This 177-nucleotide RNA was probed chemically with 2A3 and DMS. Source: RMDB library OK2TST, as collected in RNAgym. In probing experiments dimethyl sulfate is read out at A N1 and C N3, which are open when not base-paired. For DMS, 2,428 sequencing reads were counted. The 2A3 profile rests on 764 reads. DMS adducts were read by reverse transcription with MarathonRT. Conditions: 150 mM KOAc, 10 mM MgCl2 and 150 mM bicine (pH 8.5), 24 C. Reactivities are given for positions 27 through 126.
RNA sequence: GGGAACGACUCGAGUAGAGUCGAAAAAGCAAAGAGUGGCCUGGGCACAUCCAUUCGACCUUUCCUGUGUGACCUCUAAUGCUGAAUUGCCGCCUUACUGGCGUGAUGUUGGGACGCUGGAUGCCUAGUGGAGGAGUAUGUUCGCAUACUCCUCCACAAAAGAAACAACAACAACAAC
Reactivity to 2A3 in 0.01 (KOAc 150mM, MgCl2 10mM, bicine 150mM(pH8.5), 24C), signal-to-noise 1, nucleotides 027 to 126: a000g090c060a040a000a000g130a030g010u050g000g040c020c000u030g090g000g080c070a080c020a080u030c020c020a110u050u090c000g080a100c000c020u050u050u050c060c050u090g010u030g030u030g080a180c000c030u020c030u050a100a050u110g000c010u040g070a070a080u120u120g020c030c000g100c000c000u110u200a090c050u070g050g010c040g040u080g040a090u050g070u170u120g090g000g030a010c010g010c050u050g000g030a000u050g030c000c030u030a000
Reactivity to DMS in 0.01 (KOAc 150mM, MgCl2 10mM, bicine 150mM(pH8.5), 24C), signal-to-noise 2, nucleotides 027 to 126: a040g000c050a050a100a090g000a080g000u010g010g010c060c020u000g010g000g010c020a040c100a120u010c030c040a100u000u010c050g000a140c130c030u000u000u000c000c020u000g000u000g030u000g010a090c050c020u010c050u000a100a080u010g010c050u000g010a090a080u000u000g010c080c030g010c020c030u000u000a140c160u010g010g010c030g000u000g000a040u000g000u010u010g000g020g000a070c050g010c120u000g000g010a060u000g000c020c000u020a030